Structure probing data (DMS and 2A3) for a 177-nucleotide construct.
For DMS the reverse transcriptase was MarathonRT.
For 2A3, 2,015 sequencing reads were counted.
The RNA was probed in 150 mM KOAc, 10 mM MgCl2 and 150 mM bicine (pH 8.5) at 24 C.
For DMS, 2,940 sequencing reads were counted.

RNA sequence: GGGAACGACUCGAGUAGAGUCGAAAAAUAAAGUAGUCUCCUGCAGCGUCUGAGGUUUCCGUUGCAGUCCUCGGAACCAGGACCUCGGCGUGGCCUAGCGAGUUAUGGCGACGAAGGCCGAGAAAAAUCAUUAAUGUUCGUUCGCGAACAUUAAUGAAAAAGAAACAACAACAACAAC
Reactivity to DMS in 0.01 (KOAc 150mM, MgCl2 10mM, bicine 150mM(pH8.5), 24C), signal-to-noise 3, nucleotides 027 to 126: a090u020a080a050a100g010u000a140g000u000c060u000c010c010u000g000c100a110g000c080g020u000c020u000g030a050g010g000u000u000u000c030c060g000u010u000g010c080a100g010u000c040c020u000c050g000g000a060a070c050c070a130g000g010a040c130c010u000c010g010g000c010g000u000g000g010c010c010u000a120g010c080g000a110g020u000u010a080u000g010g000c010g010a080c040g010a130a080g000g000c000c000g010a080g010a030a050a070a070a090
Reactivity to 2A3 in 0.01 (KOAc 150mM, MgCl2 10mM, bicine 150mM(pH8.5), 24C), signal-to-noise 2, nucleotides 027 to 126: a000u210a010a060a030g130u100a030g050u010c020u020c040c000u020g040c020a070g060c020g050u020c040u130g020a010g080g040u010u130u000c030c030g050u090u110g000c100a030g050u060c000c000u000c000g000g040a020a020c030c000a040g000g050a040c000c000u010c020g020g000c020g020u030g010g040c000c010u010a030g040c020g090a030g040u090u090a110u180g020g040c030g010a080c010g050a130a030g120g000c010c040g000a010g060a010a090a020a000a000